[RMDB]
RNA sequence: GGGAACGACUCGAGUAGAGUCGAAAAACGACGCGAUCGAUAACGGCGUAAUCACAGAUGACCGCCCAACUUCGGUUGUUGACCCUGAUUCAAUGGGCGCACCGGAAAACGUAACGAUCGAUUCCUUCUCGCGCAUCGUGCAGGGAAUGAGCGUUGACCGUCAAAUAGGUUUCGACCUAUUUGACGGAAAAGAAACAACAACAACAAC
Reactivity to 2A3 in 0.01 (KOAc 150mM, MgCl2 10mM, bicine 150mM(pH8.5), 24C), signal-to-noise 5, nucleotides 027 to 156: a000c040g010a010c020g000c010g020a020u020c000g010a030u050a180a040c020g000g000c010g020u020a020a090u050c060a050c120a300g130a100u070g040a070c090c030g020c020c020c010a060a090c030u040u020c000g060g000u100u100g060u170u300g190a300c000c000c000u070g070a230u210u120c120a070a140u120g010g010g000c000g000c010a000c010c020g000g020a030a040a030a020c100g060u150a070a010c060g020a030u020c010g010a000u010u000c000c000u030u080c060u050c070g040c010g010c030a190u160c110g090u090g060c040a030g000g030g020a020a080u100g010a030g020c010g000u000u050g040a080
Reactivity to DMS in 0.01 (KOAc 150mM, MgCl2 10mM, bicine 150mM(pH8.5), 24C), signal-to-noise 2, nucleotides 027 to 156: a060c010g040a030c010g030c020g020a080u000c030g000a130u020a090a090c060g000g030c000g010u000a070a230u000c050a300c090a170g000a070u000g010a090c110c010g040c000c030c040a070a120c040u000u000c020g020g030u000u000g030u000u000g020a120c030c000c010u000g000a180u000u000c160a160a100u000g020g020g060c050g000c040a070c050c020g020g000a050a040a140a070c050g000u000a040a160c030g000a030u000c020g000a160u000u010c020c060u010u010c010u000c030g000c120g000c060a070u000c050g010u020g010c110a110g050g010g030a020a080u010g010a080g000c000g030u000u000g000a230

The data come from the RNA Mapping Database (RMDB), library OK3TST. Structure probing data (2A3 and DMS) for a 207-nucleotide construct. For 2A3, 2,821 sequencing reads were counted. For DMS, 4,052 sequencing reads were counted.